This 207-nucleotide RNA was probed chemically with DMS and 2A3. DMS adducts were read by reverse transcription with MarathonRT. It was measured as part of the RMDB library OK3TST.
[RMDB]
RNA sequence: GGGAACGACUCGAGUAGAGUCGAAAAAAGCCAAUGAUCUUAAGUAGAUAAGUGCUGUUGCUUGUAGUUCAACAGAAAGCUUUGAGUACGUCUUUCUUGCGAGAAAGAACACAUGCAUUCUUAUGCUCUCAAUUCUAUUAUUUUUAUUUUGGGCGAACGUGUAUACGAAGUUCGCUUCGUAUACACGAAAAGAAACAACAACAACAAC
Reactivity to DMS in 0.01 (KOAc 150mM, MgCl2 10mM, bicine 150mM(pH8.5), 24C), signal-to-noise 1, nucleotides 027 to 156: a050a080g030c010c040a090a130u020g000a060u010c040u010u010a070a160g020u000a080g020a110u010a070a120g020u000g050c020u010g010u010u010g010c020u000u020g040u000a140g000u000u010c000a040a050c150a080g000a070a050a040g010c000u010u010u000g000a080g000u000a010c040g030u000c010u010u000u010c020u010u010g030c190g020a210g000a090a050a020g010a020a010c040a030c060a020u000g000c010a020u000u030c140u000u020a070u000g000c000u010c010u000c010a030a060u000u000c000u020a090u010u010a130u010u000u010u010u000a100u070u030u040u000g020g010g010c000g030a080a090
Reactivity to 2A3 in 0.01 (KOAc 150mM, MgCl2 10mM, bicine 150mM(pH8.5), 24C), signal-to-noise 5, nucleotides 027 to 156: a020a000g090c050c010a060a070u140g040a080u050c060u180u140a220a140g030u110a070g110a070u120a130a040g010u040g020c020u000g010u020u010g020c040u070u060g090u160a200g030u090u060c000a000a010c000a020g000a090a040a010g010c020u060u040u030g010a000g000u020a020c020g000u010c000u000u010u010c010u010u080g060c220g020a020g000a020a000a000g000a000a000c000a000c000a010u030g020c010a010u080u070c010u170u300a030u070g010c000u000c010u000c000a010a010u020u000c010u010a070u120u020a090u090u170u020u060u040a120u060u120u070u060g060g020g040c080g040a050a010
The RNA was probed in 150 mM KOAc, 10 mM MgCl2 and 150 mM bicine (pH 8.5) at 24 C.